[RMDB]
RNA sequence: GGGAACGACUCGAGUAGAGUCGAAAACAUAUGACGGAGAGUGGAACACUCAGCGGAAACGCAUCCAAUGUCUGAAGUCUUUAAUGGGUAUAACAGUCAGUUGACCCAGAUCCCAACAGACAAUAAAACACUUCUAACACUUCGGUGUUAGAAGUGUAAAAGAAACAACAACAACAAC
Reactivity to DMS in 0.01 (KOAc 150mM, MgCl2 10mM, bicine 150mM(pH8.5), 24C), signal-to-noise 1, nucleotides 027 to 126: c040a060u010a080u000g000a090c100g000g000a140g010a030g000u000g040g000a190a130c130a030c000u000c020a150g000c020g000g000a010a080a080c040g020c020a300u000c030c100a240a080u010g000u000c020u000g000a160a070g000u000c030u000u000u000a220a180u000g000g000g000u000a080u010a000a000c020a220g020u000c300a200g030u000u000g000a000c040c000c000a020g000a160u000c000c000c000a080a120c030a000g000a000c030a070a100u010a040a040a050
Reactivity to 2A3 in 0.01 (KOAc 150mM, MgCl2 10mM, bicine 150mM(pH8.5), 24C), signal-to-noise 1, nucleotides 027 to 126: c020a070u110a050u260g040a060c050g120g000a040g000a000g100u050g000g260a260a020c030a000c070u010c030a020g020c010g000g080a050a030a010c030g020c000a030u000c020c020a050a110u090g000u000c000u000g110a080a030g000u050c000u030u050u070a110a100u050g060g000g000u070a180u070a220a030c020a040g300u300c030a040g020u110u030g020a000c000c000c000a000g020a050u030c010c000c020a000a030c000a000g040a020c050a010a090u100a100a030a010